The record gives the reactivity of an RNA of 177 nucleotides to DMS and 2A3. It was measured as part of the RMDB library M2PK50. The RNA was probed in 150 mM KOAc, 10 mM MgCl2 and 150 mM bicine (pH 8.5) at 24 C.
RNA sequence: GGGAACGACUCGAGUAGAGUCGAAAACAACAAUACUUCGGUAUUGUUGAAAAUGGGCCGUCCAAGAAAAGUGCUUCAAAGACUGGGAGCACUCGGCAAAAAAAACCAGUUGGUUCGCCAACUGGAACAACCAUUUUAAGUUCGCUUAAAAUGGUUGAAAAGAAACAACAACAACAAC
Reactivity to DMS in 0.01 (KOAc 150mM, MgCl2 10mM, bicine 150mM(pH8.5), 24C), signal-to-noise 4, nucleotides 027 to 126: c000a010a010c000a010a010u000a010c000u000u010c170g030g000u000a000u000u000g010u000u000g010a020a050a090a130u010g010g000g010c000c010g000u010c030c070a100a130g000a100a110a110a040g010u000g000c000u000u000c010a090a120a140g000a150c280u010g010g000g000a010g020c000a000c000u000c030g000g000c010a000a000a000a070a050a050a120a140c000c000a000g010u000u000g000g010u000u000c220g030c010c000a010a000c000u000g000g000a040a070
Reactivity to 2A3 in 0.01 (KOAc 150mM, MgCl2 10mM, bicine 150mM(pH8.5), 24C), signal-to-noise 4, nucleotides 027 to 126: c000a000a000c000a010a010u010a000c000u020u040c130g020g000u000a010u010u000g000u000u020g000a030a020a010a050u090g030g050g020c010c010g040u060c060c030a060a050g150a110a150a010a000g010u000g010c000u020u010c020a120a200a210g160a240c190u230g050g010g010a010g000c000a000c000u000c010g000g000c000a050a030a010a020a000a000a020a060c000c000a000g000u000u000g020g020u020u040c130g020c040c000a000a000c010u010g000g000a000a000